[RMDB]
RNA sequence: GGGAACGACUCGAGUAGAGUCGAAAAGCAAAUAGGAAUAGUCUAUGGCUAACAGUUGGACUGCUAUUAGCUGCUUUGGCAGUUGGGAUUGGUGUAGCUGCUUAUCAUAGGAAGAAGCUCCAAAGUAGGGAACGGUAUAAUUCGUUAUACCGUUCCCAAAAGAAACAACAACAACAAC
Reactivity to 2A3 in 0.01 (KOAc 150mM, MgCl2 10mM, bicine 150mM(pH8.5), 24C), signal-to-noise 3, nucleotides 027 to 126: g010c020a130a100a130u140a100g000g090a060a100u050a010g060u020c000u000a040u040g020g040c010u040a020a000c000a050g020u020u040g090g080a010c010u020g030c040u040a020u110u020a010g000c000u010g000c000u170u180u180g180g000c010a010g020u010u040g030g000g040a050u020u090g000g050u170g110u100a030g000c030u020g000c020u040u040a040u070c050a010u020a000g050g010a040a080g030a050a030g080c020u020c040c050a060a100a040g120u100a120
Reactivity to DMS in 0.01 (KOAc 150mM, MgCl2 10mM, bicine 150mM(pH8.5), 24C), signal-to-noise 2, nucleotides 027 to 126: g000c050a010a120a150u030a060g000g000a120a060u090a070g010u000c000u010a030u040g020g020c230u020a040a070c080a060g020u010u020g000g010a020c050u000g000c090u000a050u020u030a010g000c010u000g020c000u010u040u040g000g040c010a030g000u000u000g010g010g010a100u040u000g000g050u020g020u000a020g010c020u000g000c170u030u000a080u000c060a070u020a040g000g040a030a010g050a100a140g000c040u000c000c000a090a070a050g020u000a090
Annotation:
The data come from the RNA Mapping Database (RMDB), library OK1LIB. An RNA of 177 nucleotides, treated with 2A3 and DMS and read out base by base. Values cover nucleotides 27 to 126. Conditions: 150 mM KOAc, 10 mM MgCl2 and 150 mM bicine (pH 8.5), 24 C. The 2A3 profile rests on 2,149 reads. DMS adducts were read by reverse transcription with MarathonRT.